[RMDB]
RNA sequence: GGGAACGACUCGAGUAGAGUCGAAAAGGUCUGUCCUUUGGCAGAGUGGACUUUCGGCUUGAUCGUCCGAGAGGGGGCCAAGUGGCUUCGCUUUGAUCUUAAAAUUGCUGCUCCAAAGGGAAGACUUCAAGCGUACAAGCUUCGGCUUGUACGCUUGAAAAGAAACAACAACAACAAC
Reactivity to 2A3 in 0.01 (KOAc 150mM, MgCl2 10mM, bicine 150mM(pH8.5), 24C), signal-to-noise 2, nucleotides 027 to 126: g030g000u020c000u030g180u110c040c000u010u000u000g000g050c090a000g020a020g090u200g110g060a030c000u010u010u010c010g020g000c000u000u000g000a000u000c000g000u050c000c000g000a000g010a000g050g000g000g000g040c010c010a270a160g260u300g220g000c020u010u010c000g010c070u070u000u250g020a000u000c000u070u130a000a190a030a030u130u160g040c010u000g000c000u010c030c010a000a000a000g000g000g000a000a000g020a000c000u040u000